An RNA of 207 nucleotides, treated with 2A3 and DMS and read out base by base. It was measured as part of the RMDB library M2RFPK. 2A3 adducts were read by reverse transcription with SuperScript II with manganese. The DMS profile rests on 8,238 reads. The RNA was probed in 150 mM KOAc, 10 mM MgCl2 and 150 mM bicine (pH 8.5) at 24 C.
RNA sequence: GGGAACGACUCGAGUAGAGUCGAAAAGCCACAUAUCCCGUGACAUUGCAAAAGCAAGGCUGGCGGUAGGUAGUCCUGGGCGGCGACAGCCUUGGACUGCGGCGUAAAGGUGUACCUGGGGCCGUUAUAACGCGGUAACAGUUCGCUGUUACCGCAACUUUUGUUGUUAGUUCGCUAACAACAAAAGAAAAGAAACAACAACAACAAC
Reactivity to 2A3 in 0.01 (KOAc 150mM, MgCl2 10mM, bicine 150mM(pH8.5), 24C), signal-to-noise 4, nucleotides 027 to 156: g020c020c000a020c020a050u130a040u060c000c010c020g030u040g050a050c080a130u060u130g030c050a090a100a080a070g050c020a030a040g050g030c030u040g050g000c030g030g030u040a050g010g070u030a010g010u030c000c010u030g010g000g000c020g030g040c060g020a040c060a040g010c000c000u000u000g010g000a000c010u000g000c000g040g000c010g010u060a070a050a050g020g020u080g040u080a080c010c000u020g010g000g050g000c010c020g000u030u050a100u050a120a030c100g000c000g000g000u000a000a000c000a000g030u070u110c170g030c070u000g000u000u000a000c000c000g000c000a000a000
Reactivity to DMS in 0.01 (KOAc 150mM, MgCl2 10mM, bicine 150mM(pH8.5), 24C), signal-to-noise 3, nucleotides 027 to 156: g020c020c020a050c030a130u000a130u010c040c020c010g040u010g010a070c060a160u000u000g030c050a030a140a090a180g000c020a060a050g010g010c020u000g000g010c050g000g000u000a080g040g050u000a040g010u000c010c010u010g010g000g020c000g000g010c050g000a100c100a150g020c000c010u010u010g020g000a040c030u000g010c040g010g020c040g000u000a070a070a090g010g020u000g020u000a060c030c030u000g010g010g010g010c020c020g020u000u010a090u000a110a120c160g010c000g020g000u000a020a020c000a040g000u000u000c210g010c040u000g010u000u000a000c010c000g000c000a000a000